An RNA of 207 nucleotides, treated with 2A3 and read out base by base. Reactivities are given for positions 27 through 156. Source: RMDB library ARCHII, as collected in RNAgym.
[RMDB]
RNA sequence: GGGAACGACUCGAGUAGAGUCGAAAAAUAACUACGCUCUAGCCGCUUAAUGCCGCUAGCCAUCUACCACACGUUUCGCACAUGGGCAGUGGAUUUGAUGGUCAUCUCACAUCGUGCUAGCGAGGGAACCCUGUCCGGGGGUGAACCGCGAAACAGUGAACUCACUAUAGUUCGCUAUAGUGAGUUCAAAAGAAACAACAACAACAAC
Reactivity to 2A3 in 0.01 (KOAc 150mM, MgCl2 10mM, bicine 150mM(pH8.5), 24C), signal-to-noise 3, nucleotides 027 to 156: a000u120a060a010c110u180a050c150g060c090u030c000u020a020g010c000c000g000c070u170u260a180a050u300g000c040c020g000c000u000a010g000c010c000a000u000c010u030a050c000c000a010c010a020c150g000u030u020u040c040g010c010a010c000a020u030g010g020g000c000a020g000u010g000g080a130u250u090u130g010a000u030g000g080u060c030a140u060c060u020c000a020c000a050u020c090g020u000g000c000u050a020g000c020g020a300g030g000g000a030a010c000c000c020u030g130u190c120c100g060g000g020g030g000u000g040a030a000c000c000g020c020g040a030a060a000c010a020g070u030
The RNA was probed in 150 mM KOAc, 10 mM MgCl2 and 150 mM bicine (pH 8.5) at 24 C.